[RMDB]
RNA sequence: GGGAACGACUCGAGUAGAGUCGAAAAGGGCGUCAUCAAGAAGUGCCGUGCCUCGUCGGCCCGGCAUGCCAACCUGAUCCGAAGUUCAAGGUGGUUUCUCUGGCCUUCCAGAGAGAUGCGCGUCGGAGUCACUGCACAACUUCGGUUGUGCAGUGACAAAAGAAACAACAACAACAAC
Reactivity to DMS in 0.01 (KOAc 150mM, MgCl2 10mM, bicine 150mM(pH8.5), 24C), signal-to-noise 1, nucleotides 027 to 126: g090g030g010c070g050u000c000a000u090c150a080a100g030a110a300g020u000g000c000c000g060u080g010c060c000u000c190g000u030c300g000g010c020c010c000g050g000c000a040u000g000c000c030a000a030c000c000u030g020a090u000c090c090g000a030a030g020u000u010c150a070a040g030g000u000g000g020u000u000u000c000u000c000u000g000g050c260c140u040u070c000c000a020g000a060g030a010g000a090u000g030c070g000c120g000u000c000g000g000a100
Reactivity to 2A3 in 0.01 (KOAc 150mM, MgCl2 10mM, bicine 150mM(pH8.5), 24C), signal-to-noise 2, nucleotides 027 to 126: g090g020g000c000g030u030c010a000u000c000a000a040g210a100a040g140u000g000c010c000g000u000g040c000c000u110c140g300u180c130g020g000c010c060c000g000g000c000a000u040g000c000c000a040a150c000c030u050g000a030u030c010c100g200a170a050g030u070u100c030a040a000g020g010u000g010g010u000u030u010c010u020c000u000g050g020c100c040u300u110c010c010a000g000a000g010a030g000a000u020g020c080g000c000g110u050c050g000g000a010